Source information:
Structure probing data (DMS and 2A3) for a 177-nucleotide construct. The data come from the RNA Mapping Database (RMDB), library OK2TST.
RNA sequence: GGGAACGACUCGAGUAGAGUCGAAAAGAGCCAAUGUGUAUCUUGGCCUCCUCUCGGUUGUUGUGGCAGUAUCCACCGGCCCGCGCAAAACCGGUUGUUACAUUCCUACGCGGGAGGCCAUUGUCCACGAUUAUUAGAACUUCGGUUUUAAUAAUCGAAAAGAAACAACAACAACAAC
Reactivity to DMS in 0.01 (KOAc 150mM, MgCl2 10mM, bicine 150mM(pH8.5), 24C), signal-to-noise 9, nucleotides 027 to 126: g000a150g010c010c020a090a070u010g010u010g020u000a070u000c060u000u000g000g010c010c000u010c010c010u000c090u010c080g010g020u000u000g020u000u000g020u000g010g010c170a080g010u000a040u010c070c100a050c020c010g000g000c060c030c070g020c100g010c170a070a040a110a080c030c020g000g010u000u000g000u000u000a040c060a140u000u000c020c000u000a060c130g020c300g000g010g010a040g000g000c030c020a030u000u000g000u000c050c070a160
Reactivity to 2A3 in 0.01 (KOAc 150mM, MgCl2 10mM, bicine 150mM(pH8.5), 24C), signal-to-noise 3, nucleotides 027 to 126: g070a020g040c010c020a110a200u180g070u030g030u090a120u190c020u010u030g010g000c000c000u000c010c000u050c050u050c070g130g020u150u120g060u080u100g040u150g030g000c030a020g000u040a040u040c000c020a010c000c000g050g000c030c000c020g130c020g010c070a050a070a030a050c010c000g000g000u000u010g020u000u020a030c030a070u080u100c010c000u020a030c030g030c040g030g000g010a010g000g000c000c000a010u010u030g000u000c000c010a030

For 2A3, 6,480 sequencing reads were counted. For DMS the reverse transcriptase was MarathonRT. Conditions: 150 mM KOAc, 10 mM MgCl2 and 150 mM bicine (pH 8.5), 24 C.